[RMDB]
The record gives the reactivity of an RNA of 207 nucleotides to 2A3.
RNA sequence: GGGAACGACUCGAGUAGAGUCGAAAAAAGAAUGAGAUCAUACCCUUUGCAGCAACAUUGACAGAGGUAGAGGUCACCAUCCUAGGCAGACCAACACAGGAACAGAAAACCAAAUACUGCAAGUUCUCACCUAUGAGUGGGAGCUAAACAACAACAACAUACUCGACGAUUUCGAUCGUCGAGUAUGAAAAGAAACAACAACAACAAC
Reactivity to 2A3 in 0.01 (KOAc 150mM, MgCl2 10mM, bicine 150mM(pH8.5), 24C), signal-to-noise 2, nucleotides 027 to 156: a010a010g130a040a060u160g010a060g020a070u100c070a060u140a080c000c000c000u050u030u050g030c000a070g000c010a010a090c010a200u000u040g100a020c000a020g040a050g010g020u070a040g030a030g120g000u000c000a000c100c010a020u040c000c010u050a000g000g000c020a050g020a080c020c000a060a000c070a010c000a040g000g000a040a000c030a080g050a000a030a010a010c050c010a070a160a060u080a150c020u020g020c020a020a000g000u000u000c000u000c010a000c000c030u300a250u300g030a110g100u040g000g000g010a000g000c010u040a130a010a020c050a050a000c010a020a010c000a000a000

Values cover nucleotides 27 to 156. It was measured as part of the RMDB library OK3TST. As a SHAPE reagent, 2A3 marks flexible, mostly unpaired nucleotides at the ribose 2'-OH.